An RNA of 177 nucleotides, treated with DMS and 2A3 and read out base by base. Source: RMDB library OK2TST, as collected in RNAgym. Conditions: 150 mM KOAc, 10 mM MgCl2 and 150 mM bicine (pH 8.5), 24 C. Values cover nucleotides 27 to 126. For DMS the reverse transcriptase was MarathonRT.
RNA sequence: GGGAACGACUCGAGUAGAGUCGAAAACGGCCCCAACAAGCGCGACGGUGGUGACUUUCUUGCGGGCGAUGAUCUGGUUGGCCAGGCUUAGCGAUACGCCGACGAACAGUCGAUCGGCGCCAGCGGCCUUGGAUAUGUAGUUCGCUACAUAUCCAAGAAAAGAAACAACAACAACAAC
Reactivity to DMS in 0.01 (KOAc 150mM, MgCl2 10mM, bicine 150mM(pH8.5), 24C), signal-to-noise 9, nucleotides 027 to 126: c130g010g000c030c000c010c050a080a080c140a110a100g010c050g020c030g010a070c070g010g020u010g010g020u000g000a080c090u000u000u000c050u000u000g010c050g000g000g010c040g010a080u000g000a060u010c040u000g010g010u000u000g010g010c040c050a120g010g010c020u000u010a140g010c080g010a140u010a100c050g000c010c000g000a040c040g010a060a150c220a120g000u000c030g000a110u000c000g000g000c010g010c040c070a160g010c030g000g000c080
Reactivity to 2A3 in 0.01 (KOAc 150mM, MgCl2 10mM, bicine 150mM(pH8.5), 24C), signal-to-noise 5, nucleotides 027 to 126: c030g070g000c000c010c020c000a010a070c030a030a010g040c030g010c020g080a060c030g040g030u040g030g070u050g060a080c030u070u150u100c040u100u140g040c020g010g010g000c020g030a060u060g000a030u020c040u070g070g000u080u090g090g010c020c010a010g000g010c020u050u100a020g010c010g030a020u030a120c010g000c030c000g020a010c010g010a110a060c030a070g210u080c010g060a150u010c010g010g000c010g020c000c000a020g020c020g020g020c020